[RMDB]
RNA sequence: GGGAACGACUCGAGUAGAGUCGAAAAGGUUCAUGGUUCGCCAUGAACCAAAAGUACAGCUAUGAGUACAAGUGUCAUAGCAAAAGAUCGAAAGUUCAAAAAAAAGUAGCUCCUUCGGGAGCUACAAGUAAAUACGUCUGUUCGCAGACGUAUUUACAAAAGAAACAACAACAACAAC
Reactivity to DMS in 0.01 (KOAc 150mM, MgCl2 10mM, bicine 150mM(pH8.5), 24C), signal-to-noise 2, nucleotides 027 to 126: g010g020u000u000c000a000u000g020g020u010u020c260g030c020c000a020u000g010a010a000c000c020a010a010a050a170g000u000a010c000a260g000c010u010a000u000g010a000g000u000a020c020a100a100g030u020g010u000c000a030u000a000g020c020a110a060a130a080g010a050u000c040g000a130a110a160g000u000u000c020a000a030a000a000a160a020a100a140g020u010a000g000c000u000c000c000u000u000c150g020g010g010a000g000c010u000a000c000a020a050
Reactivity to 2A3 in 0.01 (KOAc 150mM, MgCl2 10mM, bicine 150mM(pH8.5), 24C), signal-to-noise 2, nucleotides 027 to 126: g000g030u000u000c000a000u010g010g040u010u040c160g040c050c000a000u010g000a000a000c000c000a010a000a000a000g000u000a000c000a010g000c000u010a000u010g000a000g030u040a050c150a300a070g060u120g000u290c000a000u010a010g000c000a010a000a050a080g040a040u080c030g070a040a050a050g070u100u110c100a110a020a040a030a000a020a030a030g000u000a000g000c000u010c000c000u040u040c140g030g000g000a000g000c000u000a000c000a000a000
The record gives the reactivity of an RNA of 177 nucleotides to DMS and 2A3. Values cover nucleotides 27 to 126. The RNA was probed in 150 mM KOAc, 10 mM MgCl2 and 150 mM bicine (pH 8.5) at 24 C.